RNA sequence: GGGAACGACUCGAGUAGAGUCGAAAAAAUCGUGAGUAAAUUGAAAGCAAGAGGUGUUACGUCCCCUCAUCUUUAUGCUAUGACUUAUGAUUCACUCUUGAUGAAAGGCAAGGAGUUCACUAUAACCCAUGUACUGUCUCUUCGGAGACAGUACAUGAAAAGAAACAACAACAACAAC
Reactivity to DMS in 0.01 (KOAc 150mM, MgCl2 10mM, bicine 150mM(pH8.5), 24C), signal-to-noise 4, nucleotides 027 to 126: a020a010u000c030g010u010g010a020g000u000a030a090a110u020u020g020a150a090a060g000c030a050a070g010a020g010g010u000g000u020u010a090c170g000u000c030c020c010c080u000c010a000u000c020u000u000u010a090u010g030c030u000a070u000g000a050c040u010u000a030u010g000a020u000u000c070a100c060u000c010u000u000g000a090u000g000a090a070a080g010g010c030a020a040g000g010a130g000u010u010c060a040c090u000a090u020a080a110c090c080
Reactivity to 2A3 in 0.01 (KOAc 150mM, MgCl2 10mM, bicine 150mM(pH8.5), 24C), signal-to-noise 2, nucleotides 027 to 126: a010a000u030c020g000u000g010a000g030u080a100a130a170u170u210g140a250a070a020g000c000a040a020g000a000g000g070u070g050u210u280a180c160g180u120c020c030c000c000u020c020a040u000c010u070u040u050a260u120g020c010u000a050u150g010a020c010u040u050a030u060g020a030u050u030c020a020c040u060c000u000u060g050a110u010g060a060a030a030g160g010c020a010a020g030g030a020g030u020u050c090a060c110u060a050u060a170a040c010c000